RNA sequence: GGGAACGACUCGAGUAGAGUCGAAAAAAAAAGAUCUCUCUGUUCGGCUUCUUUUCGGCGAGCAGCGGCAAUGUCGGCAGGAUAAGUGAACUGCACGCUGUAGUAGAGGUCAGACUGCUCUUAAAAAACCUUAGACUUAGUUCGCUAAGUCUAAGGUAAAAGAAACAACAACAACAAC
Reactivity to DMS in 0.01 (KOAc 150mM, MgCl2 10mM, bicine 150mM(pH8.5), 24C), signal-to-noise 1, nucleotides 027 to 126: a020a040a040a110a040g000a010u010c020u000c040u020c010u000g010u020u000c090g000g030c010u010u000c070u000u010u010u000c050g010g000c020g030a030g040c010a010g020c050g020g020c090a080a120u000g000u010c060g040g030c080a070g030g000a060u000a060a110g030u000g010a180a080c030u000g000c020a070c040g030c020u000g010u010a040g010u010a040g020a020g000g000u000c010a060g010a080c040u010g000c100u010c060u010u020a000a030a110a080a030
Reactivity to 2A3 in 0.01 (KOAc 150mM, MgCl2 10mM, bicine 150mM(pH8.5), 24C), signal-to-noise 1, nucleotides 027 to 126: a000a000a060a000a000g040a020u040c060u000c010u030c030u020g100u080u010c010g120g000c030u020u060c040u090u190u080u120c030g040g000c000g020a050g010c010a010g000c010g080g000c000a030a120u100g050u110c060g090g090c090a010g080g070a040u060a300a040g070u080g150a100a100c000u020g000c010a020c030g000c000u020g010u040a010g010u000a030g000a010g040g010u000c000a000g020a000c020u020g030c020u010c060u120u090a040a140a010a010a080